RNA sequence: GGGAACGACUCGAGUAGAGUCGAAAAAGCCGUGACCGCCCCAGCGUCCGGGACGCUUCGACGAGUUCUUGAUCGACCUGCAACGUCGAGGUCUUGAUCGAACCGAUCGCCUGGGGCAUGAAGCGAACGACGUACGCAAAGACCAGCAACGGCACCGAAACCGAAAGAUCUUCGGAUCUUUCGGUUUAAAAGAAACAACAACAACAAC
Reactivity to 2A3 in 0.01 (KOAc 150mM, MgCl2 10mM, bicine 150mM(pH8.5), 24C), signal-to-noise 1, nucleotides 027 to 156: a000g040c010c000g000u010g050a020c000c070g000c000c000c000c000a000g000c000g110u220c190c010g060g070g060a060c050g070c120u100u040c020g070a100c000g020a050g100u100u040c060u150u120g050a110u140c000g000a050c000c060u100g180c230a220a100c120g010u020c000g080a000g020g120u020c000u180u250g110a240u080c080g020a000a110c010c010g050a000u100c000g050c090c020u020g000g000g000g000c000a000u000g000a080a000g000c010g000a000a070c060g230a130c030g060u140a020c000g000c010a000a230a000g010a110c010c100a020g120c060a060a030c010g060g000c010a000c190c000g160

Background: An RNA of 207 nucleotides, treated with 2A3 and read out base by base. It was measured as part of the RMDB library OK3TST. Reactivities are given for positions 27 through 156. For 2A3 the reverse transcriptase was SuperScript II with manganese. For 2A3, 300 sequencing reads were counted.